[RMDB]
RNA sequence: GGGAACGACUCGAGUAGAGUCGAAAACAUGGGCCGACUUUUACUUCAACAAAUCCGGCGAAUUCUGUGCCGCGCAUACGGACUGGCUGCAUGGAACCGAACACGAUCCCGUUAACGGCCACGAGUGGUACGAAUUCAUUGAGGCGGAAUUAGACGCUAUUUACCGUACUUUCGAGUACGGUAAAUAAAAAGAAACAACAACAACAAC
Reactivity to DMS in 0.01 (KOAc 150mM, MgCl2 10mM, bicine 150mM(pH8.5), 24C), signal-to-noise 3, nucleotides 027 to 156: c050a090u010g000g040g020c020c000g020a130c090u010u010u000u000a050c040u000u000c070a080a130c120a060a070a100u000c030c020g010g020c040g010a070a060u000u000c020u020g040u000g020c000c000g030c030g000c070a160u000a200c110g040g020a120c100u000g030g030c030u000g000c040a080u000g000g010a040a050c010c020g000a120a150c200a100c050g000a050u000c030c020c010g000u000u010a090a080c040g010g010c010c000a080c040g010a130g030u000g010g020u010a040c040g010a020a090u010u000c010a170u000u000g000a070g000g030c020g000g000a050a120u000u000a080g020a130c020g020c080
Reactivity to 2A3 in 0.01 (KOAc 150mM, MgCl2 10mM, bicine 150mM(pH8.5), 24C), signal-to-noise 4, nucleotides 027 to 156: c050a080u090g000g050g020c030c010g060a080c050u070u110u100u100a070c050u100u190c040a100a090c020a060a170a100u040c040c030g050g010c040g050a050a050u070u030c050u100g040u030g000c000c000g000c000g000c030a050u090a220c070g110g030a070c030u030g010g010c000u030g000c030a020u040g000g010a040a030c040c020g020a070a060c070a030c110g050a020u040c020c010c000g000u020u120a080a030c030g000g000c000c010a010c020g030a040g020u020g010g000u010a020c010g020a010a020u060u020c030a050u090u220g030a050g050g030c020g010g040a060a040u100u080a150g020a070c020g000c050